[RMDB]
Description
The record gives the reactivity of an RNA of 207 nucleotides to 2A3. The RNA was probed in 150 mM KOAc, 10 mM MgCl2 and 150 mM bicine (pH 8.5) at 24 C.
RNA sequence: GGGAACGACUCGAGUAGAGUCGAAAAGAGAGAGCUCAUUUUCCUCCAUUAGUAGGAGGUAGGACUAUACAUUCACAAACACGAACCUUAAAAUAGCUCACAAAAUAGUGUCAUACAUGUACCCAGCCAUCUUUCCACUCAUUCCUUCUCAAAAGGACAUUAUGCCUCACUUCGGUGAGGCAUAAUGAAAAGAAACAACAACAACAAC
Reactivity to 2A3 in 0.01 (KOAc 150mM, MgCl2 10mM, bicine 150mM(pH8.5), 24C), signal-to-noise 2, nucleotides 027 to 156: g130a010g030a000g000a000g000c020u020c060a110u080u090u160u110c010c000u000c000c020a050u080u190a060g280u140a060g040g000a010g000g000u040a060g000g010a030c010u060a040u060a200c020a020u110u130c080a040c070a050a080a030c070a040c050g040a040a110c030c030u060u110a000a030a070a040u030a010g000c010u030c060a050c050a030a070a020a060u110a010g030u020g040u060c030a020u040a170c070a050u100g010u000a060c000c000c010a000g040c010c000a030u020c000u060u050u030c040c030a020c060u080c020a050u060u040c050c000u060u040c090u070c070a140a190a000a000g030g010a000

It was measured as part of the RMDB library OK3TST.